Structure probing data (DMS and 2A3) for a 177-nucleotide construct. The reactions ran in a buffer of 150 mM KOAc, 10 mM MgCl2 and 150 mM bicine (pH 8.5), at 24 C. For 2A3 the reverse transcriptase was SuperScript II with manganese. It was measured as part of the RMDB library M2PK50.

RNA sequence: GGGAACGACUCGAGUAGAGUCGAAAAGUAUCCAUGUUCGCAUGGAUACGAAAUAUGCGCGCGUAUAUCCGGUUGGCUGGAUGCGCGCGUGUGGCUGGCCGGUGGUGCUAGUCUUCGGACUAGCAAAGUGGGUGUGAUAAUUCGUUAUCACACCCACAAAAGAAACAACAACAACAAC
Reactivity to DMS in 0.01 (KOAc 150mM, MgCl2 10mM, bicine 150mM(pH8.5), 24C), signal-to-noise 2, nucleotides 027 to 126: g010u000a000u010c000c000a000u000g000u010u020c200g040c020a000u010g010g000a000u000a000c000g000a040a060a120u000a030u010g000c000g000c000g010c010g010u000a030u010a100u000c010c000g000g000u020u020g020g020c020u010g010g020a020u000g000c000g000c000g000c000g010u000g020u010g010g020c070u000g010g000c030c020g010g020u000g000g020u000g000c010u010a010g010u000c000u000u010c200g030g020a020c000u000a000g010c010a020a040a090
Reactivity to 2A3 in 0.01 (KOAc 150mM, MgCl2 10mM, bicine 150mM(pH8.5), 24C), signal-to-noise 2, nucleotides 027 to 126: g000u000a010u000c010c000a010u000g030u030u050c260g000c130a000u000g020g010a000u000a000c000g010a020a010a000u220a070u070g010c000g000c010g000c000g020u040a120u020a040u160c040c020g070g090u220u200g300g100c060u060g060g000a010u010g000c000g000c000g000c000g000u020g000u010g030g000c050u040g020g020c020c030g030g040u090g040g060u030g010c000u010a010g000u000c000u010u030c160g020g000a000c010u000a000g000c000a010a010a040